[RMDB]
RNA sequence: GGGAACGACUCGAGUAGAGUCGAAAAGAUAUGGACCAGGUAAGCUCAUCGAUCUAUAUCGGAAACGAUAUAGGGAGAGCCUUACUGGUCCUAAGUCAAAAGUAUCCCAAGUUCGCUUGGGAUACAAGGCCUUAUGUAUGUUCGCAUACAUAAGGCCAAAAGAAACAACAACAACAAC
Reactivity to DMS in 0.01 (KOAc 150mM, MgCl2 10mM, bicine 150mM(pH8.5), 24C), signal-to-noise 2, nucleotides 027 to 126: g000a030u000a300u000g000g000a000c010c000a050g000g000u040a240a190g050c000u010c040a300u000c150g000a060u000c030u000a040u000a000u000c010g010g010a060a080a130c010g010a030u000a000u000a000g000g000g000a090g000a000g030c210c050u000u010a210c000u000g000g000u010c000c000u000a000a110g000u000c050a090a120a160a170g020u000a000u000c000c000c000a020a000g010u000u010c260g010c000u000u000g000g000g040a030u000a000c000a030a040
Reactivity to 2A3 in 0.01 (KOAc 150mM, MgCl2 10mM, bicine 150mM(pH8.5), 24C), signal-to-noise 2, nucleotides 027 to 126: g020a000u070a020u190g000g000a010c000c000a030g100g210u110a050a050g020c030u010c070a300u300c230g020a040u050c000u030a010u000a000u000c000g010g000a080a030a020c010g000a010u010a000u000a030g020g020g000a040g000a010g020c010c030u060u280a030c000u000g020g000u000c000c000u010a020a010g010u000c010a090a070a000a140g000u000a000u030c020c000c010a000a000g040u050u110c300g010c150u010u020g010g000g000a000u000a010c010a010a050